An RNA of 207 nucleotides, treated with 2A3 and DMS and read out base by base. The 2A3 profile rests on 4,213 reads. Source: RMDB library RNAMAK, as collected in RNAgym.
RNA sequence: GGGAACGACUCGAGUAGAGUCGAAAAUCCUAAGUCAGACAAAAAGUAGGCUUGGAUUUAGGGUCGGGAGCUAUCGGAAACGAUAGCGAAGAACGACCCUUGUCAGCCUAUACAAAGUCUGAUAUGGAAAAGCACAUAGAGUUCGCUCUAUGUGCAAGCCUUAACUUAACUUCGGUUAAGUUAAGGCAAAAGAAACAACAACAACAAC
Reactivity to 2A3 in 0.01 (KOAc 150mM, MgCl2 10mM, bicine 150mM(pH8.5), 24C), signal-to-noise 3, nucleotides 027 to 156: u010c000c000u010a100a010g010u010c000a000g000a000c030a040a240a040a040a030g000u000a010g020g000c040u080u190g160g000a060u300u230u110a010g000g000g000u010c020g000g010g020a020g000c000u000a000u000c010g030g050a090a050a030c020g000a000u000a000g000c000g010a030a000g000a000a000c000g000a000c010c000c000u000u000g000u000c000a010g010c000c000u000a000u010a010c060a000a110a010g000u000c000u000g000a000u010a080u050g020g000a090a070a040a020g000c020a000c010a010u010a000g010a000g010u110u140c220g100c090u000c000u000a000u000g000u000g000c000a000a000
Reactivity to DMS in 0.01 (KOAc 150mM, MgCl2 10mM, bicine 150mM(pH8.5), 24C), signal-to-noise 1, nucleotides 027 to 156: u000c000c000u000a020a250g000u010c000a020g030a130c020a060a160a160a300a300g030u000a030g040g010c000u000u000g020g030a010u000u000u060a050g060g020g070u010c000g000g030g000a280g000c000u000a000u010c000g040g000a200a110a150c050g000a010u000a000g000c000g020a050a090g060a110a280c030g000a010c000c000c010u000u000g020u000c000a110g010c020c000u000a030u000a100c200a180a160a300g000u000c010u020g000a060u020a160u010g030g020a070a080a120a190g000c000a010c000a040u000a000g020a000g030u000u030c300g070c020u000c010u020a000u000g020u010g010c030a010a060